[RMDB]
RNA sequence: GGGAACGACUCGAGUAGAGUCGAAAACCUGGUUUAGGGUUCCAGGCCAGCCCUAUCUAUCGGUCGAGAUGCGAGCGCUUAAGCUCAAAUUGAGUGGCUGAGUUAGUGGUGAACGUAUCCCUAUGUUAAAACGGUAGCUGCUUCGGCAGCUACCGAAGCAUAAUAAAUACUUCGGUAUUUAUUAUGCAAAAGAAACAACAACAACAAC
Reactivity to DMS in 0.01 (KOAc 150mM, MgCl2 10mM, bicine 150mM(pH8.5), 24C), signal-to-noise 2, nucleotides 027 to 156: c000c020u010g030g020u000u000u000a020g010g020g020u010u000c030c010a100g010g040c020c090a240g010c000c000c000u000a040u000c030u020a170u010c020g050g020u000c050g010a300g000a050u000g000c300g000a070g040c020g010c200u030u000a130a180g010c000u000c020a030a300a070u000u010g000a250g000u020g000g000c030u000g010a040g000u000u000a010g050u000g040g000u000g000a100a110c100g040u000a070u000c010c000c000u000a190u010g010u000u000a050a050a130a210c000g010g000u000a010g000c040u010g000c030u020u000c300g060g010c000a000g020c000u000a000c000c010g000a010a050
Reactivity to 2A3 in 0.01 (KOAc 150mM, MgCl2 10mM, bicine 150mM(pH8.5), 24C), signal-to-noise 3, nucleotides 027 to 156: c000c000u010g000g050u050u050u070a010g000g020g020u090u040c010c010a010g010g040c010c000a000g030c000c000c000u000a020u000c010u040a090u060c020g010g000u010c030g020a020g010a140u000g020c020g000a000g020c050g020c210u300u300a140a070g000c000u010c000a000a020a010u010u030g010a040g040u250g020g000c000u010g010a010g010u010u010a050g010u120g140g010u050g040a090a030c070g060u090a090u100c000c000c020u020a040u100g090u050u110a060a130a010a010c000g000g000u000a000g000c000u020g000c010u020u060c150g100g000c000a000g000c000u000a000c000c000g000a000a000

The data come from the RNA Mapping Database (RMDB), library M2RFPK. The record gives the reactivity of an RNA of 207 nucleotides to DMS and 2A3. For 2A3, 2,513 sequencing reads were counted. 2A3 adducts were read by reverse transcription with SuperScript II with manganese. The RNA was probed in 150 mM KOAc, 10 mM MgCl2 and 150 mM bicine (pH 8.5) at 24 C.